[RMDB]
RNA sequence: GGGAACGACUCGAGUAGAGUCGAAAACAUUGUUCUGAUCAUCUGAAGAUCAGCUAUUAGAAGAGAAAGAUCAGUUAAGUCCUUUGGACCUGAUCAGCUUGAUACAAGAACUACUGAUUUCAACUUCCGUCCUGGGAGUUUUCGAACUCCCAGGACGAAAAGAAACAACAACAACAAC
Reactivity to 2A3 in 0.01 (KOAc 150mM, MgCl2 10mM, bicine 150mM(pH8.5), 24C), signal-to-noise 2, nucleotides 027 to 126: c000a010u000u090g090u070u100c010u000g000a040u000c000a060u030c160u150g150a200a040g000a140u010c040a030g000c000u080a100u220u140a100g040a090a050g080a010g000a050a050a040g000a040u000c000a000g050u000u300a020a000g000u000c020c000u060u250u290g010g010a010c000c100u000g000a000u010c010a000g000c020u040u020g000a000u090a090c000a030a040g060a160a000c070u010a020c080u070g060a210u040u010u110c040a040a040c040u020u000c000